[RMDB]
RNA sequence: GGGAACGACUCGAGUAGAGUCGAAAAGGUUAGGCCGGCCUCCUGCACGGCGGCCGCGAAUUCGGCGUUCUCCGAGAGGAAUCCGUAGCCGGGAUGCACCGCGUCGGCUCCGGCUGCCUGCGCGGCCCUAAUCCGGAGGGUUCGCCCUCCGGAUUAGAAAAGAAACAACAACAACAAC
Reactivity to DMS in 0.01 (KOAc 150mM, MgCl2 10mM, bicine 150mM(pH8.5), 24C), signal-to-noise 2, nucleotides 027 to 126: g030g000u000u010a130g010g010c010c020g000g030c010c010u000c040c040u020g000c040a060c250g030g020c010g040g030c000c000g000c150g020a040a120u010u010c010g010g010c050g010u000u000c100u000c020c010g010a240g000a210g000g000a120a100u000c020c040g020u000a140g020c090c070g000g000g010a060u000g000c120a100c100c090g000c000g020u000c030g000g000c110u000c040c010g020g000c020u000g000c000c000u000g000c040g010c000g000g000c030c020
Reactivity to 2A3 in 0.01 (KOAc 150mM, MgCl2 10mM, bicine 150mM(pH8.5), 24C), signal-to-noise 1, nucleotides 027 to 126: g000g000u040u050a000g010g000c000c010g070g000c030c060u100c000c010u090g050c020a090c150g020g000c030g000g020c030c020g010c070g040a010a050u180u110c020g000g000c030g000u080u060c070u040c070c030g070a060g050a030g130g010a040a020u000c010c030g050u120a070g100c120c060g000g010g050a070u090g030c090a040c050c070g030c000g000u020c030g000g000c020u020c020c000g040g000c030u020g020c020c000u010g000c110g000c000g010g020c000c000
Structure probing data (DMS and 2A3) for a 177-nucleotide construct. For DMS the reverse transcriptase was MarathonRT. The RNA was probed in 150 mM KOAc, 10 mM MgCl2 and 150 mM bicine (pH 8.5) at 24 C. For 2A3 the reverse transcriptase was SuperScript II with manganese. It was measured as part of the RMDB library OK2TST. Values cover nucleotides 27 to 126. For DMS, 1,638 sequencing reads were counted.